[RMDB]
RNA sequence: GGGAACGACUCGAGUAGAGUCGAAAACAUGCGUGGAUCUAGCGAUCUCAUGCUAGGAUCGUACGCUAGCGAUCGAGUACCAUGCAUGAGGAUCAUCAGAUCUAGGUACUCAUCUAGACGUACCUAGGACCGACGGUGGAUUCGUCCACCGUCGGUCAAAAGAAACAACAACAACAAC
Reactivity to DMS in 0.01 (KOAc 150mM, MgCl2 10mM, bicine 150mM(pH8.5), 24C), signal-to-noise 1, nucleotides 027 to 126: c010a000u010g000c000g070u000g000g000a050u000c060u000a080g000c040g010a080u000c050u000c240a030u000g000c000u000a040g000g000a070u000c130g030u000a160c300g000c200u010a070g000c010g010a020u000c030g000a100g010u040a170c090c000a070u000g000c020a060u000g000a130g000g000a100u000c020a270u000c190a080g000a070u000c000u000a000g000g000u000a030c000u000c060a260u000c160u010a170g000a060c260g010u000a060c010c000u010a000g000
Reactivity to 2A3 in 0.01 (KOAc 150mM, MgCl2 10mM, bicine 150mM(pH8.5), 24C), signal-to-noise 1, nucleotides 027 to 126: c010a000u040g000c000g040u030g000g010a050u030c010u040a060g100c040g100a160u030c050u070c100a140u200g020c000u000a010g060g010a120u050c040g040u140a020c030g000c300u040a040g010c000g020a010u000c000g020a020g060u040a090c000c000a000u040g000c020a030u040g030a060g140g030a010u060c000a020u020c060a090g020a210u020c000u000a000g010g010u000a000c010u000c060a110u050c060u160a120g090a140c050g010u000a010c000c030u000a030g030
This 177-nucleotide RNA was probed chemically with DMS and 2A3. The RNA was probed in 150 mM KOAc, 10 mM MgCl2 and 150 mM bicine (pH 8.5) at 24 C. It was measured as part of the RMDB library OK2TRN.